Notes: The data come from the RNA Mapping Database (RMDB), library RFM100. This 177-nucleotide RNA was probed chemically with 2A3 and DMS. The 2A3 profile rests on 5,043 reads. The reactions ran in a buffer of 150 mM KOAc, 10 mM MgCl2 and 150 mM bicine (pH 8.5), at 24 C. The DMS profile rests on 1,931 reads. 2A3 adducts were read by reverse transcription with SuperScript II with manganese. Values are in units of 0.01, from 0 to 300, in steps of 10.

[RMDB]
RNA sequence: GGGAACGACUCGAGUAGAGUCGAAAAGAAAGAAAGAAAGAACGACCUACUGCGGCAGCACACACAGUGACGGGAAGUUGGUCGCUCCCGACGCAGUUAGGUCAGAGAAAAUUUUGUGAGACCAAAACCACAAUUCUUUCUUCGGAAAGAAUUGUGGAAAAGAAACAACAACAACAAC
Reactivity to 2A3 in 0.01 (KOAc 150mM, MgCl2 10mM, bicine 150mM(pH8.5), 24C), signal-to-noise 4, nucleotides 027 to 126: g120a010a040a000g170a040a120a020g130a040a130a020g060a070a040c110g000a010c000c000u010a000c010u000g000c000g000g000c000a000g000c010a000c000a000c020a000c070a050g020u010g010a000c000g000g000g000a020a000g010u010u000g000g000u000c000g000c000u000c000c000c000g010a000c000g000c010a010g000u140u130a000g050g020u000c010a000g010a000g020a010a140a130a150u070u110u060u020g000u000g000a080g000a010c000c010a000a070a000a000
Reactivity to DMS in 0.01 (KOAc 150mM, MgCl2 10mM, bicine 150mM(pH8.5), 24C), signal-to-noise 1, nucleotides 027 to 126: g000a120a080a180g010a060a110a120g000a050a090a080g000a190a150c080g000a030c010c000u000a000c030u000g000c000g010g000c080a080g000c000a000c000a060c010a200c150a100g040u000g000a010c000g000g010g010a010a000g020u000u000g040g010u000c000g000c210u000c000c000c000g000a040c010g020c000a000g000u050u020a000g000g000u000c000a030g000a130g060a040a070a070a070u060u000u000u000g000u000g000a030g000a000c010c010a050a060a110a140
Reactivities are given for positions 27 through 126.